[RMDB]
RNA sequence: GGGAACGACUCGAGUAGAGUCGAAAAUGAACAUUCCAGGCUCUGUGAACUAAGUGACUGAAGCUGAUUGACACAGGUCAAGGGGACUUCAAGGAAGAAAGCCAGCCUUAGACUGACAUCAGAGAACCAAACUCCGGUGUCUAAGCUCAAGAGGUUAAUACCUCAGUAUAUUCGUAUACUGAGGUAUAAAAGAAACAACAACAACAAC
Reactivity to DMS in 0.01 (KOAc 150mM, MgCl2 10mM, bicine 150mM(pH8.5), 24C), signal-to-noise 4, nucleotides 027 to 156: u000g020a060a110c050a160u010u000c020c000a190g010g000c010u000c010u000g010u010g010a100a110c080u010a080a100g020u000g010a120c070u000g000a070a100g020c060u000g000a190u000u060g000a120c030a110c060a130g030g000u000c030a060a040g030g010g000g010a070c030u000u000c040a070a080g010g000a150a120g000a070a080a080g030c010c010a060g010c010c020u010u000a140g010a080c040u000g020a050c010a030u000c000a020g010a060g000a060a250c120c200a060a080a160c010u000c000c000g040g060u000g000u000c030u000a070a040g000c030u000c040a050a120g000a070g020g020u000u000a100
Reactivity to 2A3 in 0.01 (KOAc 150mM, MgCl2 10mM, bicine 150mM(pH8.5), 24C), signal-to-noise 4, nucleotides 027 to 156: u120g010a050a020c040a100u080u000c030c030a030g010g010c000u000c020u160g030u020g030a060a040c040u060a070a030g050u030g150a080c070u060g100a080a030g000c020u040g060a150u100u090g030a020c020a010c020a070g000g090u030c020a030a080g020g010g010g050a020c010u040u030c070a020a060g070g010a020a050g050a180a030a000g050c020c030a010g000c010c000u020u030a020g010a060c020u000g000a000c000a000u000c000a010g010a010g020a090a060c100c050a090a050a110c000u000c000c010g000g000u000g000u000c010u060a090a010g000c020u020c070a070a050g010a010g090g000u000u050a010